[RMDB]
RNA sequence: GGGAACGACUCGAGUAGAGUCGAAAAGGAGUGCUACCGAAAGGUAGCACUCCAACAAAUCGGUGUAACUGCAGCCCGAGUUACACCGUGCGGCACAGCGGAAACGCUGAUGUCGUAUAAAGGGCUACUCAUAAUGAGGAUUCGUCCUCAUUAUGAGAAAAGAAACAACAACAACAAC
Reactivity to DMS in 0.01 (KOAc 150mM, MgCl2 10mM, bicine 150mM(pH8.5), 24C), signal-to-noise 4, nucleotides 027 to 126: g010g010a010g030u000g010c000u000a000c000c000g010a100a100a190g010g010u000a010g020c000a000c000u000c000c000a030a040c100a050a080a040u010c000g010g010u000g000u000a000a020c000u000g010c070a060g000c000c000c010g010a050g010u000u000a000c000a010c010c000g020u000g010c000g020g000c010a010c000a010g010c000g010g000a150a110a180c010g010c000u000g000a040u000g040u000c000g020u000a040u010a030a070a090g040g000g010c000u000a190
Reactivity to 2A3 in 0.01 (KOAc 150mM, MgCl2 10mM, bicine 150mM(pH8.5), 24C), signal-to-noise 3, nucleotides 027 to 126: g010g000a000g000u000g000c000u010a010c010c010g070a090a070a070g010g000u000a000g000c000a000c000u000c000c000a000a000c000a000a010a010u080c000g000g000u000g000u000a000a010c000u020g030c070a010g000c000c000c000g010a010g000u000u000a000c000a000c000c000g000u030g000c000g010g000c000a000c000a010g000c000g020g020a080a060a020c010g000c000u010g000a080u010g010u000c000g000u000a000u060a020a080a000g000g000g000c000u020a050

Structure probing data (DMS and 2A3) for a 177-nucleotide construct.
DMS adducts were read by reverse transcription with MarathonRT.
2A3 is a SHAPE reagent: it acylates the 2'-hydroxyl of flexible nucleotides of all four kinds.
The RNA was probed in 150 mM KOAc, 10 mM MgCl2 and 150 mM bicine (pH 8.5) at 24 C.
For 2A3, 36,586 sequencing reads were counted.